[RMDB]
RNA sequence: GGGAACGACUCGAGUAGAGUCGAAAACGAAUAGAAUUCGUUCUAUUCGAAUGACUGCUAAAAGCAGAGUUGACUGCGCCGAGCAGAUACGGCAAAGGAAAAAGUAGCCCAGAUUCGUCUGGGCUAAAACACUCUGAGACUUCGGUCUCAGAGUGUUAAAAGAAACAACAACAACAAC
Reactivity to DMS in 0.01 (KOAc 150mM, MgCl2 10mM, bicine 150mM(pH8.5), 24C), signal-to-noise 1, nucleotides 027 to 126: c000g010a020a010u000a010g000a060a070u000u010c240g010u000u000c000u000a000u000u000c000g010a020a130u000g000a100c000u000g020c020u010a030a090a070a220g000c000a010g010a210g000u000u010g000a190c000u000g000c250g000c010c010g000a060g010c030a020g010a150u020a060c040g030g030c020a090a250a080g020g000a060a030a120a060a160g000u010a010g010c010c000c000a000g000a020u000u000c190g000u000c000u000g020g000g020c010u000a000a010
Chemical mapping of a 177-nucleotide RNA with DMS. In probing experiments dimethyl sulfate is read out at A N1 and C N3, which are open when not base-paired. Source: RMDB library M2PK50, as collected in RNAgym. The RNA was probed in 150 mM KOAc, 10 mM MgCl2 and 150 mM bicine (pH 8.5) at 24 C.